[RMDB]
RNA sequence: GGGAACGACUCGAGUAGAGUCGAAAAGUAGCAAACCUAUUGACAUGAUGACAGAACUGGAGCUACGAGAGCUACUGAUUGACAACUUGAAGAUAUGGGAAGGCCAGCCAAUAAUUCAGUUUUUGGUGGCCACCUACAUAUCCAAAGGUUACAGUUCCCCAUGCUAAUGAUUCGUCAUUAGCAUGGGAAAAGAAACAACAACAACAAC
Reactivity to DMS in 0.01 (KOAc 150mM, MgCl2 10mM, bicine 150mM(pH8.5), 24C), signal-to-noise 2, nucleotides 027 to 156: g040u000a030g000c000a130a140a100c030c030u000a300u000u020g010a110c050a110u000g030a180u030g000a160c050a130g000a060a140c030u000g010g000a210g020c040u000a070c040g000a100g030a190g000c060u000a090c030u020g000a240u010u000g010a100c060a030a080c030u000u040g000a260a040g000a040u010a010u010g000g020g060a040a300g010g000c000c030a050g000c000c010a020a040u000a020a060u000u010c230a280g020u000u000u000u000u050g010g060u000g010g020c000c000a010c100c010u000a030c000a010u000a010u000c000c080a030a090a060g000g000u010u000a100c050a080g020u000u000c050
Reactivity to 2A3 in 0.01 (KOAc 150mM, MgCl2 10mM, bicine 150mM(pH8.5), 24C), signal-to-noise 6, nucleotides 027 to 156: g040u060a010g020c040a070a140a120c020c020u120a140u090u200g080a090c110a140u210g030a080u100g030a090c040a090g060a120a050c040u090g020g020a030g010c020u040a030c070g030a040g010a000g080c070u070a030c030u090g070a190u140u140g040a060c040a060a030c050u010u050g020a060a000g000a010u010a000u020g010g010g040a110a080g050g000c000c010a060g090c050c020a070a030u140a040a080u190u220c110a160g180u070u020u020u010u020g000g000u000g000g010c000c000a010c000c000u010a040c000a000u000a000u000c000c010a080a030a030g010g000u060u060a050c040a030g010u050u040c010